[RMDB]
RNA sequence: GGGAACGACUCGAGUAGAGUCGAAAAGCGAACUACAGGACCAACGUGACGAAGUGCAACAGUCGUUAGACGUGUUAGAGAAUAUGUUACAAAACGGCGAACGCAUGUGGCCGAAGCGGAUUGAAAACGCGGCAGAUGUCGACGAAGGCACGUCUCAGACUUGCUUAGAAUUCGUUCUAAGCAAGUCAAAAGAAACAACAACAACAAC
Reactivity to DMS in 0.01 (KOAc 150mM, MgCl2 10mM, bicine 150mM(pH8.5), 24C), signal-to-noise 3, nucleotides 027 to 156: g020c030g030a070a090c020u010a170c060a080g010g030a170c030c020a070a100c070g010u010g000a150c020g030a100a120g010u010g000c030a070a040c050a160g030u000c030g030u010u000a110g010a010c020g030u000g020u000u000a110g020a230g000a090a100u000a080u000g000u000u010a140c050a080a040a140a080c030g000g000c010g010a080a080c040g010c100a080u000g060u010g010g010c030c020g020a100a140g030c010g020g020a140u010u010g030a140a040a110a120c040g000c000g000g020c030a120g040a140u000g010u000c020g020a080c050g010a100a110g030g000c010a050c010g000u010c010u000c020a300
Reactivity to 2A3 in 0.01 (KOAc 150mM, MgCl2 10mM, bicine 150mM(pH8.5), 24C), signal-to-noise 5, nucleotides 027 to 156: g030c100g020a030a010c030u080a030c050a060g000g070a030c030c020a060a050c030g050u060g040a030c020g050a090a040g030u020g060c040a070a040c010a080g040u020c010g030u050u050a030g010a040c020g000u010g020u040u060a030g020a010g030a120a020u120a040u060g050u030u050a070c100a020a100a020a000c020g020g010c020g100a080a030c030g050c090a040u130g050u100g110g000c000c010g010a030a010g000c020g020g020a060u070u130g060a090a050a000a020c020g030c010g020g000c010a010g010a100u100g060u090c030g020a060c050g030a090a030g040g000c040a000c010g020u010c010u000c040a010

Notes
This 207-nucleotide RNA was probed chemically with DMS and 2A3. 2A3 adducts were read by reverse transcription with SuperScript II with manganese. Reactivities are given for positions 27 through 156. For DMS the reverse transcriptase was MarathonRT. The DMS profile rests on 5,755 reads. Source: RMDB library OK3TST, as collected in RNAgym.